[RMDB]
RNA sequence: GGGAACGACUCGAGUAGAGUCGAAAAAGGUGGUAUAACCUACCAUACACCUACACUAUAUGGUAAAGCCUAUUGCUCCUAGGCUACAAACCUGUACAAUAUGAAGUUGUACUGAACGCUAUGGGCACCAGCACGACGGGUUCGCCCGUCGUGCUGGAAAAGAAACAACAACAACAAC
Reactivity to 2A3 in 0.01 (KOAc 150mM, MgCl2 10mM, bicine 150mM(pH8.5), 24C), signal-to-noise 2, nucleotides 027 to 126: a010g140g000u140g170g000u020a060u020a300a110c000c000u020a000c000c000a000u000a060c000a020c000c000u150a020c000a000c080u200a010u050a050u300g160g000u120a100a150a000g000c000c000u060a120u210u030g000c000u000c010c000u000a000g000g020c000u070a010c020a000a200a150c000c000u000g060u000a000c000a000a080u060a080u300g080a150a170g030u090u020g030u000a050c000u250g060a180a000c120g090c100u070a150u180g000g000g000c020a020